[RMDB]
RNA sequence: GGGAACGACUCGAGUAGAGUCGAAAAACCCAGUUUCGACUGGGUAAAAAACCGUAGGUUCAGAAUAGCGGUCACAAUGACGUUCGAAAGAGUAAGACAGUGACCGAACUACUAUGAACUGAACCUAAACGGAAAAACUCGAAGUUCGCUUCGAGAAUGAUGUUACAACUUUCGAGUUGUAACAUCAAAAAGAAACAACAACAACAAC
Reactivity to DMS in 0.01 (KOAc 150mM, MgCl2 10mM, bicine 150mM(pH8.5), 24C), signal-to-noise 1, nucleotides 027 to 156: a160c000c010c000a050g000u000u000u000c180g020a060c000u000g000g000g050u010a000a030a050a090a030a030c000c050g040u010a030g010g000u000u010c010a030g010a120a010u000a030g030c040g030g000u000c010a050c030a150a100u000g030a200c120g000u010u010c090g000a190a080a220g040a150g010u020a060a090g010a140c020a120g010u020g000a010c010c000g050a040a120c020u000a130c030u000a110u000g000a080a140c000u000g010a040a040c000c000u020a010a020a120c000g010g010a040a030a020a110a150c040u000c000g010a060a050g000u000u030c300g060c040u000u000c030g010a030g000a040a140
Reactivity to 2A3 in 0.01 (KOAc 150mM, MgCl2 10mM, bicine 150mM(pH8.5), 24C), signal-to-noise 4, nucleotides 027 to 156: a000c010c000c000a020g010u020u080u100c120g050a040c010u020g010g000g020u040a090a110a010a010a070a030c050c000g000u010a010g000g000u010u010c000a010g030a180a040u010a020g020c000g000g010u000c000a000c010a050a290u260g080a130c100g050u060u090c020g100a220a150a060g060a070g060u140a160a040g030a080c070a030g020u010g000a000c000c000g000a020a000c000u070a030c000u000a020u080g120a170a110c000u000g000a000a000c000c000u040a140a080a000c000g000g010a080a070a060a020a020c000u010c020g000a000a000g000u050u120c160g060c190u000u000c000g000a010g000a000a070
This 207-nucleotide RNA was probed chemically with DMS and 2A3. 2A3 adducts were read by reverse transcription with SuperScript II with manganese. The DMS profile rests on 3,149 reads. Reactivities are given for positions 27 through 156.